[RMDB]
RNA sequence: GGGAACGACUCGAGUAGAGUCGAAAAGAUAUGGAGUCAGGAGACUUCAACUACGUUGAAACUGUAUGACCUUCGGAAACGAAGGUCAUACAGUGGAGUAGUUGGGAGAGUCCCUGACUCCUAAGUCGUAGAAGCAUUAGUUCGCUAAUGCUUCUACAAAAGAAACAACAACAACAAC
Reactivity to 2A3 in 0.01 (KOAc 150mM, MgCl2 10mM, bicine 150mM(pH8.5), 24C), signal-to-noise 2, nucleotides 027 to 126: g030a000u120a060u140g010g010a010g000u000c010a010g000g070a300g020a150c010u280u160c160a000a000c010u010a020c010g250u230u080g020a170a150a000c010u000g020u010a020u000g010a020c020c000u000u020c000g040g050a100a160a010c020g000a000a000g000g030u000c000a000u000a000c020a000g000u000g000g010a000g000u010a000g000u000u000g040g130g080a300g020a020g040u020c010c010c000u000g000a000c000u000c000c000u000a000a000g000u000c040
Reactivity to DMS in 0.01 (KOAc 150mM, MgCl2 10mM, bicine 150mM(pH8.5), 24C), signal-to-noise 3, nucleotides 027 to 126: g010a090u000a300u020g010g000a020g000u000c000a000g010g010a180g010a020c000u000u000c000a010a010c000u000a000c000g010u000u000g000a160a200a020c000u010g000u000a020u000g000a010c000c000u000u010c000g020g000a100a090a210c000g020a010a000g010g000u000c010a000u000a000c010a000g020u000g000g010a070g020u000a010g000u000u000g010g000g020a170g000a020g010u000c000c000c000u000g000a000c000u000c000c000u000a000a070g000u010c110

Description:
Structure probing data (2A3 and DMS) for a 177-nucleotide construct. 2A3 adducts were read by reverse transcription with SuperScript II with manganese. Values cover nucleotides 27 to 126. Conditions: 150 mM KOAc, 10 mM MgCl2 and 150 mM bicine (pH 8.5), 24 C.